[RMDB]
This 177-nucleotide RNA was probed chemically with DMS. Reactivities are given for positions 27 through 126. The RNA was probed in 150 mM KOAc, 10 mM MgCl2 and 150 mM bicine (pH 8.5) at 24 C. The DMS profile rests on 794 reads.
RNA sequence: GGGAACGACUCGAGUAGAGUCGAAAAGAUAUGGACGGACUGCUGCGACGAUCGCAUGUCGGAAACGACAUGCGGGAGCAGUCAGUUCCGUCCUAAGUCAAAACAGAGGGCCUUCGGGCCCUCUGAAGCACUAUUUUCUCUUCGGAGAAAAUAGUGCAAAAGAAACAACAACAACAAC
Reactivity to DMS in 0.01 (KOAc 150mM, MgCl2 10mM, bicine 150mM(pH8.5), 24C), signal-to-noise 1, nucleotides 027 to 126: g000a000u000a300u020g000g010a010c000g050g010a020c000u010g010c020u000g010c010g010a160c300g000a020u020c000g000c020a010u020g000u000c000g000g020a110a230a170c010g000a000c000a000u000g020c000g000g000g010a040g020c020a030g000u010c000a030g000u000u000c000c010g050u010c000c000u000a000a150g000u010c000a110a110a170a240c020a070g000a010g000g010g050c000c000u010u020c190g050g000g000c000c010c010u000c000u000g000a020a160